RNA sequence: GGGAACGACUCGAGUAGAGUCGAAAAGCCGCAUGAUGAAAGGAGUAGGUCUGGGCGAGAUAGAGUUCGACAUCUGCGGCCUCGCCGGGGCUAGAGACCUAUCCUUGUCAUCAAGUAUCCUAGCCCCCUAUAUAAUUUUAUUCGUAAAAUUAUAUAGAAAAGAAACAACAACAACAAC
Reactivity to 2A3 in 0.01 (KOAc 150mM, MgCl2 10mM, bicine 150mM(pH8.5), 24C), signal-to-noise 1, nucleotides 027 to 126: g010c010c010g000c010a050u130g030a010u000g060a060a040a000g020g010a020g120u010a000g010g010u000c010u030g090g020g010c020g020a000g010a010u100a060g100a020g170u080u190c060g010a030c020a040u020c010u030g040c000g040g000c000c000u000c000g000c000c000g010g000g000g000c020u020a010g000a000g000a070c000c000u000a000u000c000c010u010u050g100u040c000a010u060c000a020a040g040u030a040u020c010c000u020a010g000c000c000c000c000
Reactivity to DMS in 0.01 (KOAc 150mM, MgCl2 10mM, bicine 150mM(pH8.5), 24C), signal-to-noise 1, nucleotides 027 to 126: g010c100c020g010c030a060u030g000a010u000g000a060a030a030g000g000a050g030u010a010g000g000u000c000u000g020g000g010c000g010a020g000a180u000a030g000a070g010u030u050c070g000a160c100a060u020c030u010g010c000g020g010c060c000u000c010g000c010c040g050g000g000g010c030u000a020g000a070g020a010c010c030u000a010u010c000c010u000u000g020u030c040a050u000c090a080a140g010u010a040u010c080c010u000a030g010c010c000c030c070
An RNA of 177 nucleotides, treated with 2A3 and DMS and read out base by base. For DMS the reverse transcriptase was MarathonRT. The data come from the RNA Mapping Database (RMDB), library OK1LIB. Conditions: 150 mM KOAc, 10 mM MgCl2 and 150 mM bicine (pH 8.5), 24 C.